Chemical mapping of a 177-nucleotide RNA with DMS. The RNA was probed in 150 mM KOAc, 10 mM MgCl2 and 150 mM bicine (pH 8.5) at 24 C. It was measured as part of the RMDB library RFMREP. For DMS the reverse transcriptase was MarathonRT. Values cover nucleotides 27 to 126.
RNA sequence: GGGAACGACUCGAGUAGAGUCGAAAAUUAACCUAUAAAAGAUAAUGGAAUGUUUUAUAGACUGGAUUUUAUCUCAUCCCCUUUCCCUCUCCCAACUGCCCUCAGUUUAAUAGUUGUCAGUUUUACCCCUCAAUAUGUAGUUCGCUACAUAUUGAGGAAAAGAAACAACAACAACAAC
Reactivity to DMS in 0.01 (KOAc 150mM, MgCl2 10mM, bicine 150mM(pH8.5), 24C), signal-to-noise 1, nucleotides 027 to 126: u010u010a130a300c110c010u000a020u000a000a040a050a060g010a080u010a140a110u010g000g020a150a040u000g000u000u000u000u000a010u010a040g010a050c070u000g000g000a020u000u000u000u000a130u020c020u010c040a140u040c020c020c010c070u000u000u000c010c020c010u000c030u000c060c010c010a080a090c070u000g010c010c020c050u010c020a070g000u010u010u010a060a080u010a100g010u000u010g000u010c040a090g010u000u010u010u010a120c300c090